[RMDB]
RNA sequence: GGGAACGACUCGAGUAGAGUCGAAAACUGGUGGCUGCUGCUCCGGCAGCAGUACUGCUUUGCGCCGCCAGUGAUGCGCUGGUAUCAGAUGCGGCGGCGUGAGUGGAUGCCUCCGAUGCUGAUGACGGGUAACGUUGUAGUUCGCUACAACGUUACCAAAAGAAACAACAACAACAAC
Reactivity to DMS in 0.01 (KOAc 150mM, MgCl2 10mM, bicine 150mM(pH8.5), 24C), signal-to-noise 3, nucleotides 027 to 126: c070u000g000g000u010g000g000c010u000g000c000u000g000c010u010c300c180g010g000c000a010g000c000a020g000u020a040c050u000g000c040u010u000u040g010c040g040c000c000g030c000c010a130g000u030g000a040u000g020c010g020c190u020g000g030u040a040u010c000a040g000a180u010g030c130g000g050c020g000g000c000g070u000g000a010g010u000g010g030a190u020g000c010c000u010c030c030g000a090u000g010c010u000g000a070u010g000a140c150g010
Reactivity to 2A3 in 0.01 (KOAc 150mM, MgCl2 10mM, bicine 150mM(pH8.5), 24C), signal-to-noise 6, nucleotides 027 to 126: c040u040g040g000u050g060g000c000u000g000c010u000g000c010u020c060c190g110g000c020a000g000c000a000g010u040a040c000u010g000c000u120u080u230g010c010g010c000c000g000c000c010a040g030u030g060a040u090g000c090g020c210u230g190g020u110a060u130c020a020g060a200u130g150c050g040g000c000g000g000c000g010u020g010a010g000u030g000g030a040u120g010c000c000u030c010c030g040a080u080g020c050u080g030a180u100g030a060c100g050

This 177-nucleotide RNA was probed chemically with DMS and 2A3. For DMS the reverse transcriptase was MarathonRT. The reactions ran in a buffer of 150 mM KOAc, 10 mM MgCl2 and 150 mM bicine (pH 8.5), at 24 C. Values cover nucleotides 27 to 126.